[RMDB]
RNA sequence: GGGAACGACUCGAGUAGAGUCGAAAACCGUCAAGGUCUUCCGCUGCGGCAUGAUCCUGUCGCACACCAGCUACUUGGGCCAGAUCAACCCAACCGACUUCUUCACGCGGCUGCUGUGCGGCAUUGCUCCUAUUGAGAGUUUCGACUCUCAAUAGGAAAAAGAAACAACAACAACAAC
Reactivity to 2A3 in 0.01 (KOAc 150mM, MgCl2 10mM, bicine 150mM(pH8.5), 24C), signal-to-noise 6, nucleotides 027 to 126: c010c000g050u080c080a060a070g050g000u020c040u120u030c040c020g010c090u070g030c050g030g000c040a070u110g020a090u110c020c040u020g000u000c000g010c010a000c000a010c010c000a000g010c010u050a030c050u100u040g020g000g000c020c030a140g030a230u120c040a030a060c020c020c010a010a030c040c040g140a140c070u150u090c020u160u130c170a040c120g070c030g040g010c010u010g000c010u000g020u020g010c000g000g000c000a000u000u080g010c020
Reactivity to DMS in 0.01 (KOAc 150mM, MgCl2 10mM, bicine 150mM(pH8.5), 24C), signal-to-noise 7, nucleotides 027 to 126: c020c010g000u000c140a110a150g010g000u000c040u000u000c030c050g030c080u000g010c040g000g000c060a070u000g010a100u010c070c080u000g020u010c000g020c020a030c010a030c120c010a040g000c010u010a070c110u000u000g000g000g020c050c040a140g010a090u000c120a090a190c020c010c020a070a070c190c070g010a080c110u000u010c070u000u010c060a090c120g000c090g010g000c020u000g020c220u000g010u010g020c020g000g010c010a030u000u010g000c160